[RMDB]
RNA sequence: GGGAACGACUCGAGUAGAGUCGAAAAAGGGGAGCCGAGUGAGGCUUAUCCCGGGGAACUCGGUAAUUCGCCCCGAAAUGAGGACUCCGGGGUCCCCUUCCGAAGGAACGGAGGGGGGUGACUAGGAAUGCGUCACCGUUCGCGGUGACGAAAAGAAACAACAACAACAAC
Reactivity to DMS in 0.01 (KOAc 150mM, MgCl2 10mM, bicine 150mM(pH8.5), 24C), signal-to-noise 4, nucleotides 027 to 129: a000g020g010g050g000a110g010c030c030g040a100g040u040g020a020g040g030c050u000u080a060u020c000c000c000g070g000g000g020a020a050c020u010c030g030g000u080a040a060u020u030c160g030c090c030c010c030g020a040a060a050u090g010a050g000g000a260c050u020c020c030g070g000g060g050u040c010c020c000c050u000u000c010c010g030a280a210g000g090a150a100c030g020g010a000g000g000g050g040g050g050u000g010a080c060u010a170g020g050a130a090u090g000
Reactivity to 2A3 in 0.01 (KOAc 150mM, MgCl2 10mM, bicine 150mM(pH8.5), 24C), signal-to-noise 2, nucleotides 027 to 129: a000g040g010g010g010a000g020c030c030g000a010g090u200g080a010g040g020c000u020u030a070u050c000c000c000g000g000g000g000a010a000c000u010c010g030g030u140a170a190u130u070c060g050c010c000c000c010g020a000a010a030u160g020a040g010g010a020c010u000c000c000g000g000g000g000u000c000c000c000c000u000u020c010c000g030a140a050g160g090a090a080c050g000g020a010g000g000g000g000g000g000u030g000a030c000u050a020g010g040a060a070u140g010

The record gives the reactivity of an RNA of 170 nucleotides to DMS and 2A3. The RNA was probed in 150 mM KOAc, 10 mM MgCl2 and 150 mM bicine (pH 8.5) at 24 C. The DMS profile rests on 9,601 reads. It was measured as part of the RMDB library 15KLIB. For DMS the reverse transcriptase was MarathonRT.